RNA sequence: GGGAACGACUCGAGUAGAGUCGAAAAGUGAACGAUCUCGGUUGUUUCUCUGAAGGCAUGAUCACCCCGUCCGAUGCGGAAGAUCGUGCUUCCGUCGAACGCGAAAGUCGGACGGCGGCCAUGAGUCAAUAUGUUUAAGGCUUCGGCCUUAAACAAAGUACUGAAAAAUGUUCGCAUUUUUCAGUACAAAAGAAACAACAACAACAAC
Reactivity to DMS in 0.01 (KOAc 150mM, MgCl2 10mM, bicine 150mM(pH8.5), 24C), signal-to-noise 2, nucleotides 027 to 156: g020u010g010a040a110c050g000a090u000c000u000c030g020g000u000u000g000u010u000u000c010u020c000u000g000a140a130g020g000c010a010u000g000a060u020c070a100c000c010c000c020g000u000c020c070g000a080u020g050c030g000g020a070a060g010a110u000c170g040u000g040c060u000u010c000c030g060u000c040g000a070a130c080g010c070g020a090a120a160g000u000c020g050g010a110c040g000g000c050g000g000c110c010a050u010g020a100g040u000c040a140a120u000a090u000g010u020u000u010a010a030g010g020c000u000u000c300g090g030c000c000u000u020a000a000a010c020a010a030a080
Reactivity to 2A3 in 0.01 (KOAc 150mM, MgCl2 10mM, bicine 150mM(pH8.5), 24C), signal-to-noise 6, nucleotides 027 to 156: g150u120g060a120a030c060g020a090u070c050u050c120g040g000u000u010g000u010u020u010c060u000c040u040g090a130a050g120g020c020a020u010g000a010u090c050a030c010c000c000c000g010u000c010c000g010a010u050g020c000g020g010a020a000g010a050u200c120g070u120g080c010u010u000c000c000g050u060c050g090a190a100c080g030c020g170a120a080a040g010u010c000g000g000a000c010g000g000c030g000g000c020c000a030u020g020a010g040u050c020a020a090u070a070u270g000u000u000u000a010a000g000g000c000u030u050c260g050g010c000c000u000u020a000a000a000c000a000a000a000